[RMDB]
RNA sequence: GGGAACGACUCGAGUAGAGUCGAAAACAGUGACAACUAUUGAGAUGGUCUUCCUGAUACCAAUUAUGACUGACAUGGUCAAGAUUCCAGUAUACAACGCUCGUCAGGCGCAGAUCAAGGGAGGCGGUGUAGCCACCUCCUUCGGGAGGUGGCUACAAAAAGAAACAACAACAACAAC
Reactivity to 2A3 in 0.01 (KOAc 150mM, MgCl2 10mM, bicine 150mM(pH8.5), 24C), signal-to-noise 1, nucleotides 027 to 126: c000a000g050u000g250a000c000a050a130c010u020a100u050u240g120a170g020a100u230g080g000u020c100u000u000c070c000u000g030a080u130a000c000c000a040a290u170u100a050u250g020a050c000u000g000a170c000a180u120g000g110u170c000a080a020g000a000u300u000c080c000a000g030u000a000u000a050c210a100a000c000g000c000u000c000g140u070c030a000g020g050c000g080c070a000g000a260u000c000a100a070g010g030g030a040g070g080c000g000g000
Reactivity to DMS in 0.01 (KOAc 150mM, MgCl2 10mM, bicine 150mM(pH8.5), 24C), signal-to-noise 1, nucleotides 027 to 126: c060a080g100u020g130a100c190a090a010c080u010a170u040u000g000a130g040a000u040g030g000u010c000u000u000c000c000u010g020a120u000a040c000c060a090a120u120u000a070u000g010a000c010u000g000a040c060a220u050g000g000u000c000a120a300g000a110u040u000c010c060a060g010u080a070u070a050c040a010a140c000g010c050u160c000g000u000c210a030g000g000c060g100c080a020g000a180u000c050a050a050g030g000g000a000g010g000c050g040g030

Chemical mapping of a 177-nucleotide RNA with 2A3 and DMS.